[RMDB]
RNA sequence: GGGAACGACUCGAGUAGAGUCGAAAAAUAGACAGGUCUGAGUGCCUGAAUUUGCCUUUUCAUUUUACUUCAUCCUCCAAGGAGUUCAAUCACCUGGCGUGACUUCACUUCUUUUAAGCAAAAGAGUCUAAUGACUAUUCUUCGGAAUAGUCAUUAGAAAAGAAACAACAACAACAAC
Reactivity to DMS in 0.01 (KOAc 150mM, MgCl2 10mM, bicine 150mM(pH8.5), 24C), signal-to-noise 2, nucleotides 027 to 126: a040u000a080g020a300c000a010g000g000u000c020u020g030a170g000u000g020c000c030u010g010a050a030u000u000u000g010c030c020u010u000u010u000c110a060u010u010u010u000a040c050u010u000c090a100u000c060c000u000c070c040a060a020g020g000a050g000u010u020c090a110a170u000c030a050c040c050u010g010g050c120g010u000g000a020c020u000u000c110a030c040u000u000c000u020u000u010u000a050a080g010c210a060a080a050a070g010a150g000u010
Reactivity to 2A3 in 0.01 (KOAc 150mM, MgCl2 10mM, bicine 150mM(pH8.5), 24C), signal-to-noise 1, nucleotides 027 to 126: a020u070a000g120a000c030a020g060g010u000c070u300g280a050g100u290g060c000c060u000g020a000a010u040u060u070g010c000c000u110u070u050u090c040a150u050u090u090u210a160c050u090u090c040a150u050c020c000u060c060c030a000a000g000g000a020g000u070u040c020a030a040u050c040a060c030c020u060g100g000c090g000u000g050a020c000u010u000c020a000c050u030u000c000u010u060u040u050a040a010g020c010a000a000a070a040g020a010g060u000